[RMDB]
RNA sequence: GGGAACGACUCGAGUAGAGUCGAAAACGACUGGGGUCCGCGUUCCAUCCUUUCUUACCUUGUGGCCGGCAUGGUCCCAGCCUCCUCGCUGGCGCCGGCUGGGCAACAUUCCGAGGGGACCGUCCCCGCAGUGUUCGGUUCGCCGAACACAAAAGAAACAACAACAACAAC
Reactivity to DMS in 0.01 (KOAc 150mM, MgCl2 10mM, bicine 150mM(pH8.5), 24C), signal-to-noise 3, nucleotides 027 to 129: c160g060a100c150u040g010g010g020g020u090c040c080g020c080g050u000u050c000c000a010u040c020c080u020u060u020c070u020u050a130c000c120u010u030g030u040g000g050c000c010g000g000c020a020u000g030g000u020c300c010c000a040g000c020c070u030c000c000u040c150g030c030u030g030g030c290g010c020c040g000g000c000u020g000g000g000c050a020a000c070a070u040u050c060c100g040a060g000g000g000g000a120c130c060g030u030c000c000c000c000g090c180a070
Reactivity to 2A3 in 0.01 (KOAc 150mM, MgCl2 10mM, bicine 150mM(pH8.5), 24C), signal-to-noise 7, nucleotides 027 to 129: c030g070a010c070u090g000g000g000g010u050c050c050g030c030g040u070u030c020c010a120u090c060c000u080u120u080c040u120u160a150c040c040u040u080g040u100g080g010c010c000g000g000c040a170u150g010g030u110c000c000c010a000g010c000c020u130c030c020u090c070g010c030u020g030g010c020g000c000c000g040g010c000u020g010g010g000c020a030a000c000a110u170u090c070c050g010a040g000g010g010g000a010c000c030g080u090c000c000c000c000g010c000a020